[RMDB]
RNA sequence: GGGAACGACUCGAGUAGAGUCGAAAACGAAGGGAUGACGUUUCCGGAGGAUCCGAUGGAAAGCCUCCCCGGAUGGAGAAAGUCUAAACGGAUCCUGUGAGGCCGCCGUGAGGAUCGGGUAAGACGACUUAUACAGGCAGUUCGCUGCCUGUAUAAGAAAAGAAACAACAACAACAAC
Reactivity to 2A3 in 0.01 (KOAc 150mM, MgCl2 10mM, bicine 150mM(pH8.5), 24C), signal-to-noise 2, nucleotides 027 to 126: c020g070a050a020g040g010g000a050u060g060a050c040g020u000u030u040c030c010g030g030a030g020g010a020u020c020c000g040a050u060g010g000a120a070a020g070c010c000u020c020c030c010c010g100g010a100u120g010g020a050g040a090a180a020g190u050c030u090a230a000a000c020g020g000a000u080c000c040u070g090u110g030a050g010g000c010c010g030c000c030g090u060g040a040g040g020a040u050c040g000g020g020u050a070a010g030a040c020g000a010
Reactivity to DMS in 0.01 (KOAc 150mM, MgCl2 10mM, bicine 150mM(pH8.5), 24C), signal-to-noise 3, nucleotides 027 to 126: c080g020a130a120g000g000g010a110u000g030a100c070g010u000u010u000c030c010g010g000a180g010g010a010u000c020c030g020a210u010g010g000a050a080a100g000c170c020u000c020c020c070c120g000g000a170u010g000g010a040g000a090a160a150g000u000c040u000a030a060a170c020g000g000a030u000c010c040u000g000u000g020a070g010g000c030c090g000c110c020g000u000g000a140g000g000a050u000c040g000g000g000u000a090a080g000a100c070g000a190
The record gives the reactivity of an RNA of 177 nucleotides to 2A3 and DMS.
For 2A3 the reverse transcriptase was SuperScript II with manganese.
In probing experiments dimethyl sulfate is read out at A N1 and C N3, which are open when not base-paired.
It was measured as part of the RMDB library RFMREP.